[RMDB]
RNA sequence: GGGAACGACUCGAGUAGAGUCGAAAAUUUUCACCCUUCCUUUAGUUUCCUUCCUCUCCUGGAGAGGUCUUCUGCCCUAGCCCGGUCUUCGAAGCUUCCUUUGGCUACUACCCGGUGGAAACAACUGCUUACUUAACAAGUUCGCUUGUUAAGUAAGAAAAGAAACAACAACAACAAC
Reactivity to DMS in 0.01 (KOAc 150mM, MgCl2 10mM, bicine 150mM(pH8.5), 24C), signal-to-noise 3, nucleotides 027 to 126: u010u010u000u000c070a150c030c010c030u000u000c020c000u000u000u010a070g010u000u000u000c010c020u010u010c020c010u000c020u010c030c090u010g030g020a080g010a060g010g000u000c030u000u000c050u000g020c050c020c030u000a140g010c030c040c080g020g010u010c040u000u000c050g020a090a150g010c060u000u000c040c020u000u000u000g010g000c030u000a060c060u010a110c040c010c020g000g000u000g010g000a070a030a030c060a040a090c140u000g000
Reactivity to 2A3 in 0.01 (KOAc 150mM, MgCl2 10mM, bicine 150mM(pH8.5), 24C), signal-to-noise 3, nucleotides 027 to 126: u070u050u100u120c050a090c020c020c000u030u040c040c000u070u110u050a020g030u050u090u000c000c000u050u050c020c010u030c010u020c030c080u090g000g050a060g000a010g080g000u010c000u070u020c020u020g030c000c000c000u020a040g020c020c010c030g000g060u010c020u050u020c070g040a060a010g020c020u070u050c000c020u040u060u090g030g000c010u040a070c020u040a070c070c020c000g000g060u020g050g040a070a090a000c000a020a030c010u020g000

About this RNA:
The data come from the RNA Mapping Database (RMDB), library VIROID. This 177-nucleotide RNA was probed chemically with DMS and 2A3. For 2A3 the reverse transcriptase was SuperScript II with manganese. The reactions ran in a buffer of 150 mM KOAc, 10 mM MgCl2 and 150 mM bicine (pH 8.5), at 24 C. The DMS profile rests on 5,126 reads.